RNA sequence: GGGAACGACUCGAGUAGAGUCGAAAAGGGCGGUGCACGUACAUGGAGCUGGCACGCACACACGCAAGUGCACAGGCCGGUACCCACGUGUACACAGCACACACACGUGAACAGGGCUGGCAGAACACGACACGUUUUAAUUCGUUAAAACGUGUCGAAAAGAAACAACAACAACAAC
Reactivity to DMS in 0.01 (KOAc 150mM, MgCl2 10mM, bicine 150mM(pH8.5), 24C), signal-to-noise 5, nucleotides 027 to 126: g010g010g020c030g010g010u000g000c050a050c070g040u020a070c100a050u000g020g010a300g020c020u000g020g000c070a080c150g020c040a030c130a110c060a090c130g020c170a090a090g030u000g010c020a080c160a110g010g010c010c010g020g000u000a080c060c020c120a070c050g020u000g010u000a050c070a100c040a100g010c080a080c110a070c100a030c040a030c040g000u000g000a090a130c170a080g010g000g010c030u000g000g010c030a060g010a080a040c180a120
Reactivity to 2A3 in 0.01 (KOAc 150mM, MgCl2 10mM, bicine 150mM(pH8.5), 24C), signal-to-noise 4, nucleotides 027 to 126: g070g030g000c040g010g010u020g000c030a010c060g040u110a040c030a140u130g030g010a040g020c020u040g010g060c040a010c070g010c010a020c010a000c010a010c040g100c070a170a050g010u030g010c020a010c020a100g140g010c000c010g010g030u100a140c020c010c010a010c030g030u010g020u050a020c110a030c050a060g080c020a020c000a000c000a000c000a000c090g050u040g050a110a020c040a130g000g050g000c010u010g000g000c020a030g040a150a020c090a010